This 177-nucleotide RNA was probed chemically with DMS.

RNA sequence: GGGAACGACUCGAGUAGAGUCGAAAAGGGGUCUGGAGCCGAUCCCCUGACGAGCCCAAGGCAGGGCGAAACCAGUCGUUGCCUCGGUUGAUAAGGCUGGCUCCCUGGCAUGGGAGCGCCGCAUGGGGCUCUGUUAUGUGUUCGCACAUAACAGAGCAAAAGAAACAACAACAACAAC
Reactivity to DMS in 0.01 (KOAc 150mM, MgCl2 10mM, bicine 150mM(pH8.5), 24C), signal-to-noise 1, nucleotides 027 to 126: g020g020g020g000u000c040u000g020g000a090g010c000c030g010a090u010c000c000c020c030u020g000a140c090g030a230g010c030c010c020a150a130g000g070c070a090g010g020g000c090g000a070a120a080c010c070a060g010u000c030g040u000u000g000c020c060u000c090g000g000u000u000g010a110u000a140a090g010g020c030u000g010g010c000u010c000c020c000u000g000g010c120a080u000g020g000g010a030g020c010g000c020c010g040c180a070u030g000g000g000
For DMS the reverse transcriptase was MarathonRT. For DMS, 899 sequencing reads were counted. The reactions ran in a buffer of 150 mM KOAc, 10 mM MgCl2 and 150 mM bicine (pH 8.5), at 24 C. It was measured as part of the RMDB library VIROID. Values cover nucleotides 27 to 126.